[RMDB]
RNA sequence: GGGAACGACUCGAGUAGAGUCGAAAAGGGACGAGCUGGAUCCAACCCGUGAGAACGGGUUGGAUCUAGCUCAAUGGCGUGUUGUUAGAAUUUCGGAGAAUUCUGAGUUCCGAAGAGUACGCCAUGACUACUGCUAUGUAUUCGUACAUGGUAGUAGAAAAGAAACAACAACAACAAC
Reactivity to DMS in 0.01 (KOAc 150mM, MgCl2 10mM, bicine 150mM(pH8.5), 24C), signal-to-noise 9, nucleotides 027 to 126: g010g010g020a140c170g000a010g020c000u000g000g000a010u000c000c000a000a010c000c000c000g020u000g010a240g000a220a010c000g010g000g010u000u000g000g000a000u000c000u000a000g010c000u000c000a020a010u000g000g010c000g020u000g000u000u000g000u000u000a120g000a040a030u000u000u000c010g010g010a040g000a110a100u010u000c040u000g000a050g000u000u000c010c040g000a040a050g000a070g010u000a010c000g010c000c000a010u000g010a270
Reactivity to 2A3 in 0.01 (KOAc 150mM, MgCl2 10mM, bicine 150mM(pH8.5), 24C), signal-to-noise 4, nucleotides 027 to 126: g040g000g020a010c020g000a010g000c010u010g000g000a000u000c000c000a000a000c000c000c000g000u020g040a120g020a030a010c000g000g000g000u000u000g000g000a000u000c000u000a000g000c000u000c000a000a000u000g000g000c000g000u000g020u020u030g110u040u020a010g010a050a040u110u160u090c010g010g030a040g050a120a220u140u010c020u050g020a020g030u030u000c010c010g010a020a000g010a010g020u010a000c000g000c000c000a010u020g020a000
This 177-nucleotide RNA was probed chemically with DMS and 2A3.
For 2A3 the reverse transcriptase was SuperScript II with manganese.
For 2A3, 27,328 sequencing reads were counted.
DMS adducts were read by reverse transcription with MarathonRT.
The reactions ran in a buffer of 150 mM KOAc, 10 mM MgCl2 and 150 mM bicine (pH 8.5), at 24 C.